[RMDB]
RNA sequence: GGGAACGACUCGAGUAGAGUCGAAAAGAUAUGGAGAAUCUUCGAUAAGCUGUAUGUCGGAAACGACAUUCAGCUUUUGACGAAGACUCCUAAGUCAAACACUGGAAAGCUUCGGCUUUCCAGUGAACUCUAGCAGUGAGUUCGCUCACUGCUAGAGAAAAGAAACAACAACAACAAC
Reactivity to DMS in 0.01 (KOAc 150mM, MgCl2 10mM, bicine 150mM(pH8.5), 24C), signal-to-noise 1, nucleotides 027 to 126: g010a010u000a300u000g000g000a000g000a150a130u000c000u000u000c000g000a090u000a020a030g000c000u000g000u000a000u000g000u010c000g030g000a070a050a130c010g020a010c000a000u000u000c000a020g000c010u000u000u000u020g020a150c110g000a020a000g000a030c010u000c010c000u010a060a120g000u010c030a130a040a200c010a000c010u000g000g000a040a030a020g030c000u000u000c260g030g010c000u000u000u000c000c000a000g020u000g000a020a100
Structure probing data (DMS) for a 177-nucleotide construct. For DMS, 1,246 sequencing reads were counted. Values cover nucleotides 27 to 126.